Chemical mapping of a 177-nucleotide RNA with 2A3 and DMS. DMS adducts were read by reverse transcription with MarathonRT. The RNA was probed in 150 mM KOAc, 10 mM MgCl2 and 150 mM bicine (pH 8.5) at 24 C. 2A3 adducts were read by reverse transcription with SuperScript II with manganese. As a SHAPE reagent, 2A3 marks flexible, mostly unpaired nucleotides at the ribose 2'-OH.
[RMDB]
RNA sequence: GGGAACGACUCGAGUAGAGUCGAAAAUAAGAGCAUGUACGAAUCACGAUAUGAGAGUUCCUGGUGAAUCCCGGGUACAACGAAAGGUAUUAAUCUCCCACUGCGUUCCCUUGCAGUAGGGAUAUAAUAAUCUAUUUCUCUUCGGAGAAAUAGAUUAAAAAGAAACAACAACAACAAC
Reactivity to 2A3 in 0.01 (KOAc 150mM, MgCl2 10mM, bicine 150mM(pH8.5), 24C), signal-to-noise 1, nucleotides 027 to 126: u230a020a010g000a000g050c020a050u090g020u060a030c010g010a060a060u010c060a010c090g030a080u020a050u300g100a110g000a020g030u050u020c000c000u000g040g000u050g150a090a070u070c030c000c000g050g020g010u050a040c020a040a010c050g030a080a050a030g130g020u060a050u090u150a100a040u010c030u000c050c010c010a010c000u010g000c000g020u020u070c010c020c000u020u080g000c000a010g000u130a090g010g000g000a000u000a000u010a000a020
Reactivity to DMS in 0.01 (KOAc 150mM, MgCl2 10mM, bicine 150mM(pH8.5), 24C), signal-to-noise 4, nucleotides 027 to 126: u020a070a080g010a090g020c060a050u000g010u010a060c040g000a100a100u000c030a050c070g010a130u010a100u010g000a100g000a200g000u000u000c010c010u000g010g010u010g000a100a080u010c120c030c030g020g010g020u000a020c060a050a070c080g010a040a070a080g000g010u000a040u010u000a080a080u020c100u010c000c000c020a060c000u000g010c000g000u010u000c030c020c030u000u000g010c000a000g000u000a060g020g000g000a010u000a000u000a050a100